[RMDB]
RNA sequence: GGGAACGACUCGAGUAGAGUCGAAAAAAAAAAGAUAUGGACGGUGAACUACUCGGUUCUAGGCGUUUGACGACGAUCGGAAACGAUCGUCCGAGCCUAGCACCGAGCACCGUCCUAAGUCAAAAAAUCAAUUGACAAUGUUCGCAUUGUCAAUUGAAAAAGAAACAACAACAACAAC
Reactivity to DMS in 0.01 (KOAc 150mM, MgCl2 10mM, bicine 150mM(pH8.5), 24C), signal-to-noise 2, nucleotides 027 to 126: a000a020a120a050a100a120g010a040u020a300u010g010g000a010c000g030g000u010g000a080a030c040u030a300c010u000c010g020g000u010u000c000u000a010g000g010c000g000u000u020u000g000a090c300g000a010c000g000a000u010c010g010g000a090a090a090c000g000a010u000c000g010u000c000c000g000a100g030c010c000u000a000g000c080a010c010c000g020a000g000c000a000c010c000g000u000c000c000u000a000a060g000u010c020a000a030a110a130a100a090
Reactivity to 2A3 in 0.01 (KOAc 150mM, MgCl2 10mM, bicine 150mM(pH8.5), 24C), signal-to-noise 1, nucleotides 027 to 126: a020a000a010a020a010a000g040a010u080a020u050g000g000a000c000g010g010u010g010a060a030c080u170a030c010u300c000g000g000u020u010c010u000a000g000g020c050g080u120u300u300g060a030c040g000a000c000g010a000u020c000g020g020a060a050a020c030g020a010u000c000g010u000c000c010g000a000g000c000c000u000a000g000c010a040c000c010g000a010g010c000a000c010c000g000u000c000c000u000a020a000g000u000c020a000a020a010a010a000a100